RNA sequence: GGGAACGACUCGAGUAGAGUCGAAAAAGUUUCAGCAUGGAUGGACUCGUUAAAGAAGUCUAUGCAACCUUUAGAUGCAGACGAUUAUUCGUAUGCAAUGGCUGCCUAAUUAGCAAAAGUUAAUUAACCAGCCAUCGCUCUUCAGCGGAGGCGCUUACAUGGGAUGAAUGUUCGCAUUCAUCCCAUGAAAAGAAACAACAACAACAAC
Reactivity to 2A3 in 0.01 (KOAc 150mM, MgCl2 10mM, bicine 150mM(pH8.5), 24C), signal-to-noise 3, nucleotides 027 to 156: a000g040u050u060u090c060a020g000c000a030u010g000g020a020u020g020g020a070c030u040c100g090u110u250a090a060a170g040a080a000g020u000c010u010a000u030g000c020a060a100c000c000u040u130u120a090g010a100u100g030c010a010g000a010c000g000a050u020u140a070u300u120c000g010u020a020u010g010c020a030a030u010g000g000c010u000g000c000c020u020a020a010u020u000a010g000c050a120a180a250a070g000u000u000a010a000u010u000a020a030c040c000a000g000c000c000a020u040c000g010c030u030c060u190u160c090a020g050c000g010g010a000g030g060c020g010c040u010u060a050
Reactivity to DMS in 0.01 (KOAc 150mM, MgCl2 10mM, bicine 150mM(pH8.5), 24C), signal-to-noise 1, nucleotides 027 to 156: a070g020u000u000u000c010a070g020c000a090u020g030g000a020u010g050g030a240c050u000c050g020u010u010a090a020a140g010a090a300g010u010c010u000a030u010g000c030a070a100c050c040u000u010u010a070g000a120u000g010c000a020g000a040c010g000a080u020u000a160u000u010c000g000u030a100u000g040c030a030a040u000g000g000c000u000g020c070c050u000a000a010u000u020a000g000c000a080a090a080a190g010u000u000a000a030u000u000a010a100c110c010a050g000c000c010a020u000c020g000c000u000c080u000u000c110a120g020c080g060g010a140g010g050c060g000c070u000u020a240
This 207-nucleotide RNA was probed chemically with 2A3 and DMS. Source: RMDB library RSTRND, as collected in RNAgym. The RNA was probed in 150 mM KOAc, 10 mM MgCl2 and 150 mM bicine (pH 8.5) at 24 C. For 2A3 the reverse transcriptase was SuperScript II with manganese. DMS adducts were read by reverse transcription with MarathonRT.